[RMDB]
RNA sequence: GGGAACGACUCGAGUAGAGUCGAAAAGAUAUGGACGUUCGUGGGAGCUCAGUCGGAAACGACGAGCGAAGAACACGACGUCCUAAGUCAAAACUUUGAGACCGAACUUCGGUUCGGUCUCAAAGAAGUACACAUUAUACUUCGGUAUAAUGUGUACAAAAGAAACAACAACAACAAC
Reactivity to DMS in 0.01 (KOAc 150mM, MgCl2 10mM, bicine 150mM(pH8.5), 24C), signal-to-noise 3, nucleotides 027 to 126: g020a050u000a300u000g000g000a010c000g000u010u000c000g010u000g000g000g000a190g020c010u000c000a110g070u000c000g030g000a090a060a210c010g010a010c010g000a010g010c000g000a030a100g020a140a180c010a010c000g010a010c000g010u010c010c000u000a010a090g000u000c030a120a090a140a150c010u000u000u010g000a010g000a010c010c000g000a010a010c000u000u010c180g010g000u000u000c000g000g000u000c000u000c010a000a000a000g010a050a130
Reactivity to 2A3 in 0.01 (KOAc 150mM, MgCl2 10mM, bicine 150mM(pH8.5), 24C), signal-to-noise 2, nucleotides 027 to 126: g020a020u060a040u150g010g000a000c030g080u200u060c010g020u180g030g010g010a040g020c010u030c090a110g010u000c010g020g030a090a070a060c010g000a000c010g000a010g000c010g000a080a010g000a020a000c000a000c010g000a000c000g000u000c010c010u000a050a010g040u000c020a020a050a090a170c000u000u010u000g010a000g000a010c000c000g020a000a010c020u060u150c300g050g000u000u000c000g000g000u000c000u000c000a000a000a000g000a000a000
Structure probing data (DMS and 2A3) for a 177-nucleotide construct. For DMS the reverse transcriptase was MarathonRT. 2A3 adducts were read by reverse transcription with SuperScript II with manganese.